[RMDB]
RNA sequence: GGGAACGACUCGAGUAGAGUCGAAAAGUGGAAGAGCACAAACCAUUGGUUUGGGUCUCGCAUCCGUUAAUUGGUCCUUGAAAACCGGAUUAUGGUAUUUAGUCCUUUGGAGUGUUCGUACCAAUAACGAGCACUACGUUUUCGAACGUAGUGCUCGAAAAGAAACAACAACAACAAC
Reactivity to DMS in 0.01 (KOAc 150mM, MgCl2 10mM, bicine 150mM(pH8.5), 24C), signal-to-noise 1, nucleotides 027 to 126: g020u060g040g000a050a080g000a050g030c080a130c000a040a020a040c000c000a170u000u020g020g010u010u020u000g030g010g010u050c000u000c040g000c240a120u010c030c000g010u050u010a030a090u010u020g000g000u000c000c040u020u010g020a060a030a120a040c080c000g000g000a030u020u000a040u020g000g010u020a050u000u000u000a010g010u000c000c000u000u000u010g000g020a110g000u000g000u020u010c050g000u020a120c070c030a020a080u020a040a090
Reactivity to 2A3 in 0.01 (KOAc 150mM, MgCl2 10mM, bicine 150mM(pH8.5), 24C), signal-to-noise 2, nucleotides 027 to 126: g210u240g020g000a070a000g000a030g000c010a000c070a070a000a000c020c000a280u110u300g000g060u000u000u070g000g000g050u010c030u010c090g070c010a070u000c000c070g040u000u100a040a040u020u220g010g000u010c030c000u060u140g070a030a000a040a040c000c080g020g000a070u160u260a150u150g080g020u050a120u010u050u070a020g000u030c010c000u000u060u240g090g020a090g030u100g030u120u100c090g000u020a080c000c000a000a130u040a110a050